RNA sequence: GGGAACGACUCGAGUAGAGUCGAAAAUAGACCAAUAACAGGCUCUGAAAUUAAGGCAAUAAUCAAUAGCUUAACAACCAAAAAAAGUCCAGGACCAGAUGGAUUCACAGCCAAAUUCUACCAGAGGUACAAGGAGGAGCUGGUACCAUUCCUUCUGACCCUCUACUAAGUUCGCUUAGUAGAGGGUAAAAGAAACAACAACAACAAC
Reactivity to DMS in 0.01 (KOAc 150mM, MgCl2 10mM, bicine 150mM(pH8.5), 24C), signal-to-noise 1, nucleotides 027 to 156: u010a110g000a260c060c030a130a070u000a110a170c060a080g040g000c040u000c010u010g020a040a050a120u010u000a040a160g040g020c010a050a110u000a060a160u050c070a030a090u010a010g030c030u010u000a070a130c080a100a130c030c030a030a000a060a110a070a050a090g000u000c030c000a030g010g000a080c030c040a110g000a080u000g020g010a060u000u000c030a010c070a100g090c030c000a050a050a080u000u000c050u000a120c030c030a050g040a090g030g020u010a040c060a050a090g010g010a100g010g010a100g070c030u000g000g000u000a040c090c040a240u000u000c010c010u010u000c010u000g000
Reactivity to 2A3 in 0.01 (KOAc 150mM, MgCl2 10mM, bicine 150mM(pH8.5), 24C), signal-to-noise 1, nucleotides 027 to 156: u060a000g070a010c020c000a000a040u150a050a080c100a070g040g050c030u020c020u110g040a090a100a090u120u030a060a050g060g000c060a050a070u110a100a030u080c110a050a120u070a100g040c010u020u080a060a060c030a000a010c000c060a000a130a030a080a030a050a000g060u000c000c030a030g010g030a020c000c000a010g000a050u000g030g000a010u080u060c080a010c040a090g020c000c000a030a050a050u090u050c000u010a080c010c010a010g050a060g170g000u000a010c010a100a030g080g000a020g000g000a000g020c000u000g000g010u000a060c020c030a070u080u100c020c000u010u010c000u000g010

The record gives the reactivity of an RNA of 207 nucleotides to DMS and 2A3. Source: RMDB library OK3TST, as collected in RNAgym. The RNA was probed in 150 mM KOAc, 10 mM MgCl2 and 150 mM bicine (pH 8.5) at 24 C.